[RMDB]
RNA sequence: GGGAACGACUCGAGUAGAGUCGAAAACUGAAGUCGAAGCUCUUCGAGACUCUGACUCUGACUCUAGUCCUCUAGCUUCGAUCAGCUCUAGGAAGUCAGUCGACUAGUCCUUCGAGAAGAGGACUUCCUCUCUAGUCGAGAGAGACUAGCUUCAGAGUAAACCAAUUAUGUUCGCAUAAUUGGUUUAAAAAGAAACAACAACAACAAC
Reactivity to DMS in 0.01 (KOAc 150mM, MgCl2 10mM, bicine 150mM(pH8.5), 24C), signal-to-noise 4, nucleotides 027 to 156: c030u000g010a080a060g040u000c010g020a090a070g020c040u000c080u000u000c050g000a280g000a070c040u000c060u010g010a130c070u000c030u010g010a100c060u000c020u000a080g000u000c010c010u000c030u000a070g000c030u030u020c010g020a120u010c100a080g010c040u000c050u010a110g040g000a050a050g010u010c020a080g020u000c010g020a150c050u000a040g010u000c010c030u000u000c040g030a200g010a180a110g000a060g020g010a090c040u000u000c020c020u000c010u000c020u000a090g010u010c080g010a160g010a080g000a110g020a030c020u000a030g020c040u000u000c020a050g000a160g010
Reactivity to 2A3 in 0.01 (KOAc 150mM, MgCl2 10mM, bicine 150mM(pH8.5), 24C), signal-to-noise 6, nucleotides 027 to 156: c040u050g030a070a010g060u050c040g030a050a010g040c040u020c050u170u110c080g040a040g040a050c040u060c100u120g040a030c010u000c040u100g020a040c010u030c020u040a030g040u030c020c020u000c020u020a030g020c020u070u060c070g060a090u080c060a020g020c000u030c030u100a080g050g060a040a020g020u070c050a030g040u070c040g040a040c020u010a020g060u040c030c020u070u110c090g140a120g030a220a030g010a040g000g030a050c000u080u070c020c010u030c000u010c020u030a060g050u080c030g010a010g000a000g000a010g000a070c010u010a020g010c000u010u010c010a010g010a010g040
Background: Structure probing data (DMS and 2A3) for a 207-nucleotide construct. The RNA was probed in 150 mM KOAc, 10 mM MgCl2 and 150 mM bicine (pH 8.5) at 24 C. 2A3 adducts were read by reverse transcription with SuperScript II with manganese. It was measured as part of the RMDB library OK3TST.